The record gives the reactivity of an RNA of 177 nucleotides to DMS and 2A3.
Values are in units of 0.01, from 0 to 300, in steps of 10.
Reactivities are given for positions 27 through 126.
For DMS, 891 sequencing reads were counted.
The RNA was probed in 150 mM KOAc, 10 mM MgCl2 and 150 mM bicine (pH 8.5) at 24 C.
For DMS the reverse transcriptase was MarathonRT.
RNA sequence: GGGAACGACUCGAGUAGAGUCGAAAAGAUAUGGAAUUGUACGGUGCAACAGCAAACAUCGGAAACGAUGUUUGACAUGCACUGUACUGAUUCCUAAGUCAAAGGUGUCCGGUUCGCCGGACACCAAGUGACAUUUCCUGUUCGCAGGAAAUGUCACAAAAGAAACAACAACAACAAC
Reactivity to DMS in 0.01 (KOAc 150mM, MgCl2 10mM, bicine 150mM(pH8.5), 24C), signal-to-noise 1, nucleotides 027 to 126: g000a070u000a300u000g010g020a000a000u010u000g030u000a010c000g000g000u000g000c000a080a090c240a300g010c000a000a000a000c020a000u010c000g010g000a160a090a220c010g030a020u000g000u000u000u000g000a040c130a300u000g010c000a000c000u000g000u040a000c000u030g010a000u000u000c010c000u000a130a120g010u000c010a020a230a090g020g040u000g020u000c000c000g000g010u000u010c260g000c020c000g000g000a020c000a000c000c100a000a000
Reactivity to 2A3 in 0.01 (KOAc 150mM, MgCl2 10mM, bicine 150mM(pH8.5), 24C), signal-to-noise 1, nucleotides 027 to 126: g020a010u110a050u240g020g010a020a010u020u030g020u010a000c030g000g000u020g000c080a210a170c060a280g110c030a050a010a000c000a010u010c020g070g000a030a070a030c000g000a030u020g030u010u000u000g000a060c030a010u080g030c000a000c030u000g000u080a000c000u000g030a000u020u020c000c000u040a190a060g100u110c030a090a020a130g000g000u020g000u000c000c010g020g100u040u020c300g050c030c000g000g000a000c050a000c000c000a000a010